Conditions: 150 mM KOAc, 10 mM MgCl2 and 150 mM bicine (pH 8.5), 24 C. This 177-nucleotide RNA was probed chemically with DMS and 2A3. 2A3 adducts were read by reverse transcription with SuperScript II with manganese. It was measured as part of the RMDB libraries RFM100 and RFMREP.
RNA sequence: GGGAACGACUCGAGUAGAGUCGAAAAAACUGGAGCGGACAAGGGGAAUCCGACUGUUUAAUUAAAACAAAGCAUUGUGAUGGCCGGAGACGGUGUUGACACAAUGUGAUUUCUGCCCAGUGCUCUGGUGCUCUACAUUUUUCGAAAUGUAGAGCACAAAAGAAACAACAACAACAAC
Reactivity to DMS in 0.01 (KOAc 150mM, MgCl2 10mM, bicine 150mM(pH8.5), 24C), signal-to-noise 5, nucleotides 027 to 126: a060a020c010u010g000g000a100g040c000g020g020a030c300a100a110g000g000g000g000a130a090u030c010c170g000a110c200u000g030u000u000u010a090a140u020u050a070a030a040a020c050a030a070a180g000c030a000u000u000g010u000g000a160u010g020g000c000c000g000g000a170g000a230c010g020g000u000g010u040u000g010a300c080a010c000a010a000u010g000u000g000a110u010u020u000c020u010g000c000c000c000a040g000u010g010c040u010c020u040g000
Reactivity to 2A3 in 0.01 (KOAc 150mM, MgCl2 10mM, bicine 150mM(pH8.5), 24C), signal-to-noise 6, nucleotides 027 to 126: a000a000c050u040g000g000a110g010c030g010g020a010c060a100a060g030g010g020g080a060a100u090c030c020g050a050c040u010g050u030u040u050a190a230u120u180a080a080a010a010c040a050a050a000g010c000a010u010u000g010u010g040a150u110g070g010c010c000g020g000a040g020a040c010g000g020u070g100u120u170g080a020c000a000c000a020a020u000g010u010g020a010u020u100u010c020u020g020c000c010c010a010g010u030g010c020u000c010u050g040